[RMDB]
RNA sequence: GGGAACGACUCGAGUAGAGUCGAAAAGCAUUGGCAAAGUUAAUCAAAAGUGCAUCAAAACUUUCCCUAAACGAAAUCAAAAUCGUUAUGAUGCACUUUUGACAUCGAUUAAGAUGAAUAGACACAAAUGGUUCUAUACAUUCGUGUAUAGAACCAUAAAAGAAACAACAACAACAAC
Reactivity to 2A3 in 0.01 (KOAc 150mM, MgCl2 10mM, bicine 150mM(pH8.5), 24C), signal-to-noise 2, nucleotides 027 to 126: g070c070a090u180u300g100g000c060a080a110a050g080u180u160a100a060u020c000a000a000a010a000g000u010g000c020a000u010c010a000a000a090a160c050u060u050u040c010c000c020u020a040a000a000c000g030a000a050a060u210c110a070a090a020a170u020c010g000u000u000a020u070g020a000u010g000c000a000c010u000u000u000u000g010a000c000a000u000c000g140a140u210u210a110a080g000a010u010g000a040a080u080a150g090a040c030a000c010a090a260
Reactivity to DMS in 0.01 (KOAc 150mM, MgCl2 10mM, bicine 150mM(pH8.5), 24C), signal-to-noise 4, nucleotides 027 to 126: g020c070a090u010u000g000g030c040a130a090a090g000u010u000a100a180u000c000a010a020a010a020g010u000g000c000a010u010c000a050a080a080a110c140u000u000u000c000c000c010u000a070a010a010c000g010a010a050a050u020c300a100a090a170a070u000c010g010u000u000a260u000g000a000u000g000c000a010c000u000u000u000u000g010a030c050a010u000c000g010a150u000u010a100a110g000a010u000g010a090a110u010a060g000a070c080a050c200a060a080